[RMDB]
RNA sequence: GGGAACGACUCGAGUAGAGUCGAAAAAGGCCUACACCCAUUGGACCAAUGAGGUGUAUCACAGAAUGACCUCGCUCCAGCUUCAUCACAGAUUUGGAACCAAAGAUGCAAUCUACUGGAGUACAUGCUCUCUUCGCCAUUUCGAUGGCGAAGAGAGAAAAGAAACAACAACAACAAC
Reactivity to DMS in 0.01 (KOAc 150mM, MgCl2 10mM, bicine 150mM(pH8.5), 24C), signal-to-noise 1, nucleotides 027 to 126: a010g000g000c130c030u000a020c020a010c030c010c010a010u000u010g000g090a280c300c140a050a010u000g000a090g030g010u050g000u010a040u040c130a100c110a090g010a150a160u000g010a070c010c000u010c170g000c000u000c000c000a060g000c090u000u010c030a020u000c050a140c140a130g000a130u030u050u000g070g000a100a110c170c050a000a080a190g000a050u000g000c210a050a010u010c020u000a120c050u000g000g040a000g010u000a060c120a100u020g000
Reactivity to 2A3 in 0.01 (KOAc 150mM, MgCl2 10mM, bicine 150mM(pH8.5), 24C), signal-to-noise 1, nucleotides 027 to 126: a020g020g040c000c010u010a000c010a020c000c000c000a000u020u050g050g140a130c180c020a020a030u050g020a060g040g000u000g000u000a050u100c070a060c000a070g300a170a090u130g070a080c000c000u040c020g030c010u000c000c010a010g010c010u050u000c040a030u020c000a030c030a170g020a150u070u210u210g060g070a070a060c100c010a060a080a050g000a010u100g070c080a020a050u040c030u100a020c000u000g030g030a020g010u030a050c010a010u100g020
Structure probing data (DMS and 2A3) for a 177-nucleotide construct. The reactions ran in a buffer of 150 mM KOAc, 10 mM MgCl2 and 150 mM bicine (pH 8.5), at 24 C. Source: RMDB library OK2TRN, as collected in RNAgym. Reactivities are given for positions 27 through 126.